[RMDB]
RNA sequence: GGGAACGACUCGAGUAGAGUCGAAAACUUUCUUGAUUUUUUACCAAUCGCCUGAUGAAAAUACCUUCCAGAGCAGAGAACAACAGUAGAAGUAUGCUGAAAAAGUUAGUAUGAGAAGUUUGAAUUGGAACGAGGUAUGAUUCGUCAUACCUCGUUCAAAAGAAACAACAACAACAAC
Reactivity to DMS in 0.01 (KOAc 150mM, MgCl2 10mM, bicine 150mM(pH8.5), 24C), signal-to-noise 2, nucleotides 027 to 126: c010u000u020u000c030u000u000g010a020u000u000u000u000u000u010a150c060c080a080a050u010c070g010c040c030u040g000a080u030g000a080a030a060a080u000a050c070c060u000u000c050c040a080g000a160g000c060a080g010a040g020a060a090c060a080a130c070a070g010u030a070g000a080a230g000u020a070u000g000c000u000g000a050a070a100a050a110g020u010u000a060g030u000a040u000g000a060g000a080a090g010u000u000u010g040a020a130u000u000g000
Reactivity to 2A3 in 0.01 (KOAc 150mM, MgCl2 10mM, bicine 150mM(pH8.5), 24C), signal-to-noise 1, nucleotides 027 to 126: c000u080u210u140c060u000u060g050a050u300u030u010u000u000u270a040c000c050a020a210u070c060g010c030c030u010g120a100u050g030a170a070a070a000u220a090c000c010u070u020c060c010a000g010a000g000c000a000g130a040g010a130a030c000a010a030c000a080g000u000a010g040a300a000g110u190a000u110g040c040u000g000a050a030a030a030a030g030u040u170a040g040u010a230u130g070a030g000a000a000g030u020u050u000g240a170a280u000u080g040

This 177-nucleotide RNA was probed chemically with DMS and 2A3. Values cover nucleotides 27 to 126. The reactions ran in a buffer of 150 mM KOAc, 10 mM MgCl2 and 150 mM bicine (pH 8.5), at 24 C.